[RMDB]
RNA sequence: GGGAACGACUCGAGUAGAGUCGAAAACUCGCUCAAACAUACAGAGAUGUUGUGCGAAAUGAAUCUCUCUGCAUUAGAAUGGUCGAAGAAUCAGCGGCGAUUCGAGACCUAAUUAGAAGCCGCAUUAACAGCUUUGGAACACGCCUUGCUGACGUGAACCAUACUAUCGAUUCGUCGAUAGUAUGGUAAAAGAAACAACAACAACAAC
Reactivity to 2A3 in 0.01 (KOAc 150mM, MgCl2 10mM, bicine 150mM(pH8.5), 24C), signal-to-noise 6, nucleotides 027 to 156: c010u000c000g000c020u050c050a140a110a090c020a020u150a060c040a030g060a010g000a060u020g010u030u010g000u030g010c020g040a080a030a070u200g060a100a120u050c050u000c000u000c010u140g050c050a120u050u110a070g120a300a100u190g030g000u000c010g010a090a030g000a040a050u010c030a050g010c000g020g000c010g010a000u000u010c010g010a020g000a010c000c010u020a020a040u050u050a020g050a170a020g000c010c000g010c020a020u080u100a090a070c030a010g050c030u140u180u240g080g010a080a000c020a010c030g030c000c000u030u050g000c000u000g030a030c010g040u050g020a000
Reactivity to DMS in 0.01 (KOAc 150mM, MgCl2 10mM, bicine 150mM(pH8.5), 24C), signal-to-noise 2, nucleotides 027 to 156: c050u000c050g000c040u010c040a130a140a100c050a110u000a080c020a040g010a040g000a040u000g010u010u000g050u000g020c060g030a110a110a100u000g010a100a070u000c080u000c000u000c000u000g010c000a090u000u000a170g010a130a140u000g030g030u000c000g000a220a170g000a090a040u000c000a080g010c100g000g030c080g010a050u000u000c040g010a300g000a040c010c010u000a020a040u010u010a140g000a100a070g000c020c000g010c010a220u000u010a070a080c030a070g000c050u000u000u000g000g010a100a130c030a080c000g000c000c010u000u000g010c180u000g000a050c020g000u000g000a120